The record gives the reactivity of an RNA of 207 nucleotides to 2A3.
RNA sequence: GGGAACGACUCGAGUAGAGUCGAAAAGGGGUCACCCAGACAGAGCCCUGUGGAGCUUGGAUUUACUGAAGCCUCCACGGUUGUCAGCUCCACCUGGCUCUGAUUGGGUGACGGAGGCACCCAAAGUACUUCGGUAUGUUCGCAUACCGAAGUACAACAAUACAGGAUGCUUCGGCAUCCUGUAUUGAAAAGAAACAACAACAACAAC
Reactivity to 2A3 in 0.01 (KOAc 150mM, MgCl2 10mM, bicine 150mM(pH8.5), 24C), signal-to-noise 2, nucleotides 027 to 156: g050g000g030g000u000c000a000c000c000c000a010g010a000c000a000g010a000g030c010c020c060u090g020u000g010g010a020g000c030u090u120g150g050a120u300u300u210a140c040u080g060a120a050g040c010c020u080c130c080a060c020g000g000u050u050g010u010c010a010g000c000u000c000c000a010c010c030u030g000g000c000u010c000u000g000a010u010u000g000g020g000u000g010a010c020g000g000a020g030g000c050a060c020c010c000a100a030a000g010u000a000c000u000u000c000g000g000u010a010u010g050u040u080c280g010c170a000u000a000c000c000g000a000a000g000u000a000c000a000a000
The RNA was probed in 150 mM KOAc, 10 mM MgCl2 and 150 mM bicine (pH 8.5) at 24 C.